[RMDB]
RNA sequence: GGGAACGACUCGAGUAGAGUCGAAAAACGGUGCGGAAGUUCGCGCUUCCGUGAAACGCGAAAAUCGGACGGUGGCUGCAAGUCGCAUCGUAAAACCGCGGCAAGUGGAGUUAGCGAGAGGAGGCUGAAACCAUCCAACACUUCGGUGUUGGAUGAACGUACUUGGCUGUUUCGACAGCCAAGUACGAAAAGAAACAACAACAACAAC
Reactivity to 2A3 in 0.01 (KOAc 150mM, MgCl2 10mM, bicine 150mM(pH8.5), 24C), signal-to-noise 1, nucleotides 027 to 156: a000c000g010g000u000g020c000g000g030a050a060g080u080u140c060g010c010g020c110u080u040c000c000g010u020g130a110a070a040c170g000c060g080a120a020a020a130u150c050g050g000a000c010g010g040u000g000g000c080u060g030c050a000a020g060u060c000g040c000a030u010c020g050u010a000a060a000a030c000c020g000c000g040g000c060a030a080g020u060g050g050a030g000u050u100a000g010c000g060a020g020a020g090g060a010g010g010c020u040g060a060a010a010c040c000a020u020c000c000a000a000c000a000c000u040u090c270g150g010u000g000u000u000g000g000a000u000g000a000a010